This 177-nucleotide RNA was probed chemically with DMS and 2A3. DMS adducts were read by reverse transcription with MarathonRT. The data come from the RNA Mapping Database (RMDB), library M2PK50.
[RMDB]
RNA sequence: GGGAACGACUCGAGUAGAGUCGAAAACUCGAAUCUUUCGAGAUUCGAGACUCUCGAAGUGUCAAUAAGAUCGAAAAGAUCGCCGAGCUUAAAAUAGACACAAUGCUGCUUGAUUCGUCAAGCAGAAGUAUAGUUGAAGCUUCGGCUUCAACUAUACAAAAGAAACAACAACAACAAC
Reactivity to DMS in 0.01 (KOAc 150mM, MgCl2 10mM, bicine 150mM(pH8.5), 24C), signal-to-noise 3, nucleotides 027 to 126: c010u000c000g000a010a010u010c010u000u000u000c160g050a020g010a000u000u000c000g000a030g000a060c170u000c010u000c010g000a150a110g010u000g020u010c020a060a230u000a030a030g010a020u000c000g000a090a080a130a160g000a060u000c120g010c190c020g000a040g010c040u010u000a010a060a130a110u010a070g010a010c010a010c020a110a110u000g010c020u000g020c010u000u000g000a040u000u000c250g010u000c010a010a010g000c000a010g000a030a060
Reactivity to 2A3 in 0.01 (KOAc 150mM, MgCl2 10mM, bicine 150mM(pH8.5), 24C), signal-to-noise 3, nucleotides 027 to 126: c020u000c000g000a020a000u000c010u010u100u180c240g110a020g010a020u010u010c000g010a000g010a030c040u030c000u000c020g080a280a060g020u000g010u000c020a040a040u060a100a030g010a020u020c010g040a050a140a120a110g090a080u040c010g000c040c010g030a040g000c020u170u080a100a120a050a050u120a140g010a000c010a000c000a010a110u130g010c010u000g010c000u000u000g010a010u010u090c230g010u010c100a000a010g000c000a000g000a020a010
For DMS, 1,990 sequencing reads were counted.